Conditions: 150 mM KOAc, 10 mM MgCl2 and 150 mM bicine (pH 8.5), 24 C. An RNA of 177 nucleotides, treated with DMS and 2A3 and read out base by base. For 2A3 the reverse transcriptase was SuperScript II with manganese.
RNA sequence: GGGAACGACUCGAGUAGAGUCGAAAAUCUAUCUGGCUGGAGAACCGCUGGACGAGCCGACCGCCAGUUGGGUGAGCAAUACGCUGGAUGUGCCGGUCAUCGACAACUACUGGCAGACCGAAUCCGGGAUAGGAUGAUCAUUCGUGAUCAUCCUAUCAAAAGAAACAACAACAACAAC
Reactivity to DMS in 0.01 (KOAc 150mM, MgCl2 10mM, bicine 150mM(pH8.5), 24C), signal-to-noise 6, nucleotides 027 to 126: u010c040u000a060u000c030u000g000g020c020u000g010g010a210g010a120a130c080c070g000c040u000g000g020a090c090g020a100g010c050c050g010a110c050c030g010c020c010a020g010u000u000g010g000g010u000g000a110g010c090a090a110u010a100c170g010c020u000g010g020a050u000g020u000g010c040c020g000g000u010c090a100u000c030g010a090c090a080a080c100u000a060c060u010g000g010c040a090g000a070c050c020g000a090a060u010c030c030g010g010
Reactivity to 2A3 in 0.01 (KOAc 150mM, MgCl2 10mM, bicine 150mM(pH8.5), 24C), signal-to-noise 5, nucleotides 027 to 126: u010c010u020a060u010c010u020g040g000c020u060g040g040a100g030a150a090c020c000g000c060u050g040g070a090c020g030a030g060c040c010g080a090c020c020g000c000c010a010g020u070u230g090g000g010u080g040a030g020c010a060a100u090a180c080g000c020u020g030g000a080u040g020u050g120c050c010g000g020u010c020a050u060c050g060a050c030a130a040c040u150a030c030u050g040g000c020a020g040a040c030c020g040a020a040u050c030c000g040g030